[RMDB]
RNA sequence: GGGAACGACUCGAGUAGAGUCGAAAAGAUAUGGACCUGUAAGGGAGGCUACUAUCGGAAACGAUAGAGCCGAGGAUCUUACACGGGUCCUAAGUCAAAGAUACCGACGGUUCGCCGUCGGUAUCAACUAACUAGACAUCUUCGGAUGUCUAGUUAGAAAAGAAACAACAACAACAAC
Reactivity to 2A3 in 0.01 (KOAc 150mM, MgCl2 10mM, bicine 150mM(pH8.5), 24C), signal-to-noise 1, nucleotides 027 to 126: g040a000u020a030u120g010g000a000c010c040u050g010u020a010a000g040g040g060a050g010g000c010u160a250c010u000a300u010c000g000g020a060a020a010c000g000a000u010a000g020a010g000c000c000g010a020g030g000a030u020c000u010u000a020c140a090c250g130g040g000u000c000c000u000a040a020g010u020c030a170a090a130g010a000u010a010c000c000g020a000c010g000g100u080u160c300g060c150c000g000u010c000g000g000u000a000u000c000a000a000
Reactivity to DMS in 0.01 (KOAc 150mM, MgCl2 10mM, bicine 150mM(pH8.5), 24C), signal-to-noise 4, nucleotides 027 to 126: g000a020u000a150u020g000g010a020c000c000u000g010u000a000a010g000g010g000a040g010g020c010u000a140c010u000a000u000c000g010g000a050a050a090c000g000a020u000a010g000a060g010c000c000g010a060g010g000a120u000c000u000u000a010c010a150c300g030g020g010u000c000c000u000a010a090g000u000c010a120a150a140g000a020u000a000c000c000g010a010c000g000g010u010u030c300g040c000c000g000u000c000g000g000u000a000u000c010a050a200
An RNA of 177 nucleotides, treated with 2A3 and DMS and read out base by base. The RNA was probed in 150 mM KOAc, 10 mM MgCl2 and 150 mM bicine (pH 8.5) at 24 C. For 2A3 the reverse transcriptase was SuperScript II with manganese. For DMS the reverse transcriptase was MarathonRT.